[RMDB]
This 177-nucleotide RNA was probed chemically with DMS and 2A3. The 2A3 profile rests on 1,859 reads. It was measured as part of the RMDB library OK2TST.
RNA sequence: GGGAACGACUCGAGUAGAGUCGAAAACAUUCUGUGGCCAUGUAGUGUUGCACGUGAGCACUGUGGUGCUGUGCGAAGAUCUCUUCCCUGGAGCUUGGGCGCAUGCAUCCUGGAAAAAAAGGAGUUCCCCACAUGCAGUAUUCGUACUGCAUGUGGGAAAAGAAACAACAACAACAAC
Reactivity to DMS in 0.01 (KOAc 150mM, MgCl2 10mM, bicine 150mM(pH8.5), 24C), signal-to-noise 2, nucleotides 027 to 126: c100a070u000u010c050u000g030u010g020g010c070c030a060u000g030u000a090g010u000g000u010u000g000c030a030c100g020u000g040a060g020c030a040c020u010g000u010g010g030u000g020c050u000g030u000g000c020g010a070a060g010a030u000c060u000c030u000u000c020c030c060u000g010g000a080g000c050u000u010g040g000g020c050g020c040a040u000g010c060a090u010c010c020u000g030g000a000a010a050a100a070a110a040g000g000a170g000u010u000c040
Reactivity to 2A3 in 0.01 (KOAc 150mM, MgCl2 10mM, bicine 150mM(pH8.5), 24C), signal-to-noise 2, nucleotides 027 to 126: c040a070u170u010c040u080g060u070g050g020c030c010a060u110g060u070a060g030u020g100u150u100g000c030a030c070g050u110g060a010g000c030a000c030u080g060u150g160g000u030g030c050u030g030u020g010c020g010a030a010g030a070u020c040u000c000u050u050c010c010c000u030g040g030a030g050c020u020u050g000g020g020c010g010c010a020u160g020c000a030u020c020c010u030g020g020a060a050a010a020a030a020a060g070g060a060g030u070u080c010

Overview
The RNA was probed in 150 mM KOAc, 10 mM MgCl2 and 150 mM bicine (pH 8.5) at 24 C.